Conditions: 150 mM KOAc, 10 mM MgCl2 and 150 mM bicine (pH 8.5), 24 C. Structure probing data (DMS and 2A3) for a 207-nucleotide construct. For 2A3, 1,098 sequencing reads were counted. 2A3 adducts were read by reverse transcription with SuperScript II with manganese. For DMS the reverse transcriptase was MarathonRT. For DMS, 1,929 sequencing reads were counted.
[RMDB]
RNA sequence: GGGAACGACUCGAGUAGAGUCGAAAAAAGCCGGUUUGAGGCCCGGCGAAACGCGGGCCUGUCUCCUAAGAUGCCUCCGCUAGUCGAGCGGACUUGGCCUCUUCCGCCCAAGGACCUUUUCUUUCUGAUCUUGCUUGUUCCAACGAGCCCCGCGAGUUACAAGAGGAAUGUUCGCAUUCCUCUUGUAAAAAGAAACAACAACAACAAC
Reactivity to DMS in 0.01 (KOAc 150mM, MgCl2 10mM, bicine 150mM(pH8.5), 24C), signal-to-noise 1, nucleotides 027 to 156: a130a210g000c000c020g060g020u000u010u010g030a090g030g000c270c000c050g040g050c010g010a020a060a100c080g010c060g030g010g090c040c000u000g050u000c010u010c060c010u000a120a110g010a120u000g000c000c020u000c000c010g000c010u010a180g000u020c170g020a220g020c050g000g020a040c050u010u010g050g000c000c040u000c030u000u000c050c030g000c040c040c060a150a150g000g040a080c040c020u010u000u000u000c010u000u010u000c070u010g000a140u000c020u020u000g010c040u010u000g020u000u010c080c050a100a230c090g000a130g000c050c000c020c020g040c060g000a240g030u020
Reactivity to 2A3 in 0.01 (KOAc 150mM, MgCl2 10mM, bicine 150mM(pH8.5), 24C), signal-to-noise 2, nucleotides 027 to 156: a010a010g040c030c000g030g050u020u040u060g090a050g000g060c030c040c000g090g100c050g020a110a090a010c160g000c030g040g000g000c010c010u010g030u000c060u050c020c030u060a060a030g010a060u050g010c020c000u020c000c000g020c020u030a080g220u150c100g100a010g000c010g000g030a030c040u100u130g030g020c000c010u010c020u090u010c020c020g020c000c040c030a010a060g090g000a060c010c020u110u110u130u070c080u020u150u040c060u090g090a170u040c010u050u070g040c000u070u060g040u100u100c010c000a090a050c050g020a010g020c000c020c000c000g050c010g030a040g030u010